[RMDB]
RNA sequence: GGGAACGACUCGAGUAGAGUCGAAAAUGAGGCGACGAUGACUGAGUUGCAUACCGUCGCGCACAGGAUCCGCAUUAACGAGGCGCUAGGCGAAGUGACAACACCCGUAUAUGAACGUUUGCCGUCGGUGUGCAGCCAUGUUCGCAUGGCUGCACACAAAAGAAACAACAACAACAAC
Reactivity to DMS in 0.01 (KOAc 150mM, MgCl2 10mM, bicine 150mM(pH8.5), 24C), signal-to-noise 1, nucleotides 027 to 126: u000g000a230g010g010c070g070a000c020g000a030u000g000a030c090u110g000a010g040u000u000g040c000a000u000a040c160c000g000u000c000g050c060g040c280a140c180a160g000g000a140u010c060c040g000c020a080u020u020a150a040c120g030a050g000g000c000g020c000u000a070g000g000c010g010a000a300g030u000g000a070c140a070a040c110a120c040c020c000g100u000a040u000a110u000g050a090a050c090g000u000u050u000g010c060c010g050u000c000g000
Reactivity to 2A3 in 0.01 (KOAc 150mM, MgCl2 10mM, bicine 150mM(pH8.5), 24C), signal-to-noise 1, nucleotides 027 to 126: u170g040a020g000g050c030g000a000c000g040a110u080g000a000c020u130g050a040g170u170u010g120c010a000u030a100c000c090g010u000c000g000c010g010c010a040c000a000g140g000a070u020c000c000g090c070a060u150u120a070a000c070g000a000g000g020c000g080c100u010a000g000g040c000g000a080a000g020u080g040a010c000a070a000c010a040c000c040c000g010u170a010u010a030u250g070a080a000c000g020u000u020u150g000c000c000g040u130c030g010
This 177-nucleotide RNA was probed chemically with DMS and 2A3. It was measured as part of the RMDB library OK1LIB. The 2A3 profile rests on 652 reads. For DMS, 1,036 sequencing reads were counted. Conditions: 150 mM KOAc, 10 mM MgCl2 and 150 mM bicine (pH 8.5), 24 C.